[RMDB]
RNA sequence: GGGAACGACUCGAGUAGAGUCGAAAACAGUGCUAGAUUGUAUUACUGAAUGAGGGACAGAGUCCUGAACACAGUAAGAACUGUUAACCUAAGCCGGGCGCAGUGGCUCACGCCUAUAAUCCCAAUACUUUGGGGGGCCGAGGUGGGUGGAUCACCAACCAUAGCACCAGUUCGCUGGUGCUAUGGUAAAAGAAACAACAACAACAAC
Reactivity to 2A3 in 0.01 (KOAc 150mM, MgCl2 10mM, bicine 150mM(pH8.5), 24C), signal-to-noise 1, nucleotides 027 to 156: c020a030g000u040g020c080u300a110g070a300u170u230g080u180a110u050u020a000c000u000g080a090a070u090g020a090g000g030g000a000c100a120g210a110g120u000c000c020u010g020a010a000c080a000c000a000g010u020a010a030g000a000a050c000u000g030u080u010a020a010c000c000u020a120a000g030c060c040g050g040g000c040g030c020a050g050u110g080g000c000u000c070a010c010g010c000c010u110a130u100a100a110u050c010c000c000a020a020u150a250c050u110u020u040g010g000g010g000g030g020c000c060g000a020g000g000u020g030g020g020u070g000g000a010u020c070a000c030c000a000

This 207-nucleotide RNA was probed chemically with 2A3. Values are in units of 0.01, from 0 to 300, in steps of 10. The reactions ran in a buffer of 150 mM KOAc, 10 mM MgCl2 and 150 mM bicine (pH 8.5), at 24 C.